Chemical mapping of a 177-nucleotide RNA with 2A3.

RNA sequence: GGGAACGACUCGAGUAGAGUCGAAAAAGAAAGAGCGUAGCACACACUCAGACUAAGUCUGACACACACCUACGCUAAACAUCUUAGUGUGUGAUCGAGAUAACGAUGUGUGUGUAAGAUGAAAAAACGUCAGUUCACGUUUCGACGUGAACUGACGAAAAGAAACAACAACAACAAC
Reactivity to 2A3 in 0.01 (KOAc 150mM, MgCl2 10mM, bicine 150mM(pH8.5), 24C), signal-to-noise 1, nucleotides 027 to 126: a000g180a000a040a020g080a010g010c010g030u010a000g020c000a000c000a000c000a000c010u000c040a000g030a080c070u160a230a000g030u000c000u010g030a010c000a000c000a000c000a010c020c010u010a000c000g000c000u020a040a020a000c010a030u040c020u010u040a000g010u000g000u000g000u000g050a160u030c040g030a020g060a170u150a100a090c030g010a010u030g030u010g000u000g000u000g000u010a000a000g020a010u050g060a080a010a050a010a000a000
The RNA was probed in 150 mM KOAc, 10 mM MgCl2 and 150 mM bicine (pH 8.5) at 24 C. 2A3 adducts were read by reverse transcription with SuperScript II with manganese. Values are in units of 0.01, from 0 to 300, in steps of 10. It was measured as part of the RMDB library M2PK90.